[RMDB]
RNA sequence: GGGAACGACUCGAGUAGAGUCGAAAAGGAUUUCUCGAGGGUGGUCGGCACACUCCCAAGUUGAAAGGGGGUGGUGCUGUUUGACGGUAUUUGAAGCGUUGAUGUUUGCCGUAGCGUUUGCGACUUUGUAAUACAUAUGGUUCGCCAUAUGUAUUACAAAAGAAACAACAACAACAAC
Reactivity to 2A3 in 0.01 (KOAc 150mM, MgCl2 10mM, bicine 150mM(pH8.5), 24C), signal-to-noise 6, nucleotides 027 to 126: g080g010a070u040u080u040c040u070c050g020a090g020g000g010u080g010g040u050c010g000g040c000a010c000a000c010u030c010c000c000a110a050g140u140u180g220a150a090a100g010g000g010g000g000u040g010g070u020g000c010u000g030u010u010u100g030a020c010g000g020u050a100u050u150u120g080a050a020g060c050g030u060u070g050a130u070g030u040u080u100g030c030c030g010u030a030g040c030g050u030u080u120g030c020g010a020c010u000u000u010
Reactivity to DMS in 0.01 (KOAc 150mM, MgCl2 10mM, bicine 150mM(pH8.5), 24C), signal-to-noise 5, nucleotides 027 to 126: g010g010a110u010u010u010c020u000c030g000a080g020g000g010u000g030g020u000c030g000g000c030a060c020a030c010u010c000c000c000a070a150g020u010u030g010a080a130a160g000g000g010g010g020u000g000g020u010g030c010u000g000u010u010u010g000a040c040g010g000u000a060u000u010u000g010a090a070g010c040g000u010u000g010a050u000g000u010u000u010g000c020c020g000u000a070g020c090g010u010u010u000g000c060g000a200c080u010u000u000